[RMDB]
RNA sequence: GGGAACGACUCGAGUAGAGUCGAAAAGACGGAAAAGAUCGAACCUAAGAAUAUCAGGAAUUGUGAACCGAAUCCUAGGGCUCCUAGGUACGCAUCGUCCGAUGCGAAAUAAACACUAACGUCGAAAAUGCCCUAAUGACUUCGGUCAUUAGGGCAUAAAAGAAACAACAACAACAAC
Reactivity to 2A3 in 0.01 (KOAc 150mM, MgCl2 10mM, bicine 150mM(pH8.5), 24C), signal-to-noise 2, nucleotides 027 to 126: g000a000c000g020g110a000a120a000a030g150a040u120c020g020a110a100c000c000u000a050a010g050a050a100u160a000u170c120a050g020g020a010a170u130u080g000u000g020a100a030c020c000g010a010a000u000c030c030u130a110g150g000g080c110u020c000c030u040a050g000g000u000a040c020g000c000a000u000c020g170u050c100c200g000a000u020g000c020g000a040a040a040u070a010a020a000c000a000c000u120a160a000c000g010u000c020g040a070a020a020
Reactivity to DMS in 0.01 (KOAc 150mM, MgCl2 10mM, bicine 150mM(pH8.5), 24C), signal-to-noise 1, nucleotides 027 to 126: g070a060c080g000g020a110a100a030a000g020a030u060c050g000a110a000c040c000u020a150a110g000a110a130u060a040u060c260a000g000g000a070a000u000u000g000u040g000a170a120c200c020g000a000a060u090c000c010u000a230g070g080g040c130u000c000c030u000a000g000g000u000a070c040g000c060a000u000c000g000u040c120c220g010a000u000g000c050g040a020a040a040u070a300a070a030c070a080c060u010a020a160c000g030u070c000g000a090a010a080
An RNA of 177 nucleotides, treated with 2A3 and DMS and read out base by base. Reactivities are given for positions 27 through 126. For DMS, 1,079 sequencing reads were counted. It was measured as part of the RMDB library OK1LIB. 2A3 adducts were read by reverse transcription with SuperScript II with manganese. For 2A3, 943 sequencing reads were counted.